[RMDB]
RNA sequence: GGGAACGACUCGAGUAGAGUCGAAAAGGCUCCCACUUCGGUGGGAGCCAAAGCUGAACGCGCACCAAGCGUUAAACAUGGAAAAACGCACGUCCAAUGCGCAAAGCUUCCCCUUCGGGGGAAGCAACGUAUGACAUGUGUUCGCACAUGUCAUACGAAAAGAAACAACAACAACAAC
Reactivity to DMS in 0.01 (KOAc 150mM, MgCl2 10mM, bicine 150mM(pH8.5), 24C), signal-to-noise 2, nucleotides 027 to 126: g010g050c020u010c010c000c000a000c000u010u000c150g070g050u000g020g030g000a020g060c010c010a000a010a040g020c140u010g000a060a120c120g020c010g000c040a140c100c130a060a160g000c010g030u000u000a070a060a060c140a090u000g000g010a050a200a070a080a050c040g000c010a060c100g010u010c010c090a080a150u010g010c000g000c120a070a080a140g010c000u000u000c010c020c000c000u000u060c160g000g000g000g000g000a010a000g000c000a000a010
Reactivity to 2A3 in 0.01 (KOAc 150mM, MgCl2 10mM, bicine 150mM(pH8.5), 24C), signal-to-noise 2, nucleotides 027 to 126: g000g000c000u010c040c000c000a010c020u040u040c250g060g000u020g000g000g000a000g000c000c010a000a000a000g010c000u010g050a070a020c100g000c010g000c010a040c030c060a060a040g000c000g000u000u050a090a250a020c060a160u230g150g030a030a080a090a000a040c040g020c040a030c080g070u070c050c050a060a020u080g000c000g020c000a050a040a060g010c000u000u000c010c000c000c040u010u090c230g050g000g000g000g000a010a000g000c000a010a000
An RNA of 177 nucleotides, treated with DMS and 2A3 and read out base by base. Source: RMDB library M2PK50, as collected in RNAgym. The 2A3 profile rests on 2,327 reads. DMS adducts were read by reverse transcription with MarathonRT. Reactivities are rounded to 0.1 and cut off at 0 and 3.